[RMDB]
RNA sequence: GGGAACGACUCGAGUAGAGUCGAAAAGCUGGUCCGGUUUGGCCCCAGCGAACACUUGACGAACGGAUAGUCCCGUCUUGUGGAUUAGGACGUUCUAGGUCCGGUCUGGCCCCUAGUUCGUCCGAAACGGUGCGGCAUAGUUCGCUAUGCCGCACCGAAAAGAAACAACAACAACAAC
Reactivity to 2A3 in 0.01 (KOAc 150mM, MgCl2 10mM, bicine 150mM(pH8.5), 24C), signal-to-noise 1, nucleotides 027 to 126: g040c040u060g010g070u080c010c060g190g000u010u060u300g150g000c080c040c000c030a000g060c020g090a090a000c000a020c000u000u000g010a000c040g010a240a000c040g000g290a300u120a100g150u210c000c010c020g000u000c000u000u020g000u080g080g070a140u070u090a040g000g010a000c000g060u000u000c000u000a000g030g030u000c040c060g040g100u110c060u100g030g160c090c150c000c000u000a000g000u000u000c030g020u000c000c000g000a000a000a000